[RMDB]
RNA sequence: GGGAACGACUCGAGUAGAGUCGAAAAGAAAGCCGGGGAGAAGUACGGUGAGCCUGUCAUUAUUCAGAGAGGCUAGAUCCUCUGUGUUGAGAAGGAUCAUGAUGGGCUCCUCGGUGUUCUCCAGGAACGUGCGGUUUGAGUUCGCUCAAACCGCACGAAAAGAAACAACAACAACAAC
Reactivity to 2A3 in 0.01 (KOAc 150mM, MgCl2 10mM, bicine 150mM(pH8.5), 24C), signal-to-noise 1, nucleotides 027 to 126: g080a040a080a000g070c030c030g300g000g000g020a000g000a000a030g050u210a030c000g010g010u040g010a000g000c000c000u000g020u000c020a000u000u080a000u010u010c100a010g010a000g010a010g170g000c020u020a070g070a250u170c000c000u000c000u000g140u080g110u300u280g130a150g010a190a040g060g000a000u000c000a000u000g050a010u000g000g000g000c000u000c000c000u000c050g000g000u080g060u080u010c000u030c000c000a020g080g000a040a060